[RMDB]
RNA sequence: GGGAACGACUCGAGUAGAGUCGAAAAGAUAUGGAUCCGUGAACUACGUGGGUGGUCGGAAACGACCACGAUUCACGCACGGAGUCCUAAGUCAAAACUCAUCUACCUGUUCGCAGGUAGAUGAGAACCACGUUAAUCUCUUCGGAGAUUAACGUGGAAAAGAAACAACAACAACAAC
Reactivity to DMS in 0.01 (KOAc 150mM, MgCl2 10mM, bicine 150mM(pH8.5), 24C), signal-to-noise 2, nucleotides 027 to 126: g000a030u000a120u020g000g010a150u030c000c030g000u010g010a090a040c160u000a300c030g040u000g000g020g030u000g000g020u000c000g050g000a040a040a050c000g000a010c000c000a000c030g000a030u000u010c000a000c000g000c010a010c000g000g000a250g000u000c000c030u000a030a100g000u000c010a110a080a110a200c000u000c000a000u000c000u000a000c000c000u020g000u000u010c200g040c000a000g000g000u000a000g000a000u000g000a000g000a010a170
Reactivity to 2A3 in 0.01 (KOAc 150mM, MgCl2 10mM, bicine 150mM(pH8.5), 24C), signal-to-noise 1, nucleotides 027 to 126: g010a010u030a010u050g000g000a020u000c000c000g000u010g050a040a050c100u190a120c300g020u020g050g240g000u020g010g000u000c020g000g000a020a040a000c010g000a000c000c000a000c000g000a020u030u120c010a010c030g060c000a000c020g070g010a000g090u010c000c010u000a000a000g000u010c020a000a020a070a230c000u000c000a000u000c000u000a000c000c000u010g020u090u150c300g000c100a000g040g000u000a000g000a000u000g000a000g000a000a030